The data come from the RNA Mapping Database (RMDB), library OK3TST.
Structure probing data (DMS and 2A3) for a 207-nucleotide construct.
The DMS profile rests on 2,874 reads.
RNA sequence: GGGAACGACUCGAGUAGAGUCGAAAAUUUUGACAUUUCUCAGCGGAGCUAGAACACAUCUAUUGCUCUCCUCCUAGCCUGCGACCCUCUGUUCCGGUCAAUUCCUAAGCAUUUAAGGUAUUUGGCAUAGCACUUUGCUCGAAACCGGGCAGAGACAUGGUGAAAAUGGAUUCGUCCAUUUUCACCAAAAAGAAACAACAACAACAAC
Reactivity to DMS in 0.01 (KOAc 150mM, MgCl2 10mM, bicine 150mM(pH8.5), 24C), signal-to-noise 2, nucleotides 027 to 156: u000u000u000u000g000a140c090a170u000u000u010c010u020c020a150g050c100g010g000a110g010c030u000a070g020a070a030c150a120c110a110u000c060u000a110u020u010g010c010u000c020u000c060c050u000c050c000u000a080g000c040c010u000g010c040g000a120c050c030c020u000c020u000g000u000u040c020c020g000g010u000c060a040a190u000u000c050c040u000a080a110g010c070a090u000u000u000a100a050g040g040u000a080u000u000u010g030g040c060a070u000a100g040c080a070c080u010u010u010g000c000u000c000g010a190a060a100c050c020g000g010g030c000a000g000a060g000a050c100a190
Reactivity to 2A3 in 0.01 (KOAc 150mM, MgCl2 10mM, bicine 150mM(pH8.5), 24C), signal-to-noise 2, nucleotides 027 to 156: u120u120u050u090g040a010c010a070u030u100u000c040u010c050a010g030c020g050g000a140g030c020u020a010g040a140a080c100a010c030a220u030c150u230a210u140u170g040c030u030c050u050c030c020u010c000c020u040a000g020c030c000u030g030c040g050a060c040c010c010u000c000u030g010u100u300c000c020g000g000u000c030a010a050u010u020c010c010u080a070a040g020c060a090u090u150u170a100a000g030g010u020a110u060u100u060g040g000c020a030u080a020g030c000a070c150u150u110u090g040c040u080c060g050a070a060a050c030c000g000g000g010c000a000g000a000g000a010c020a060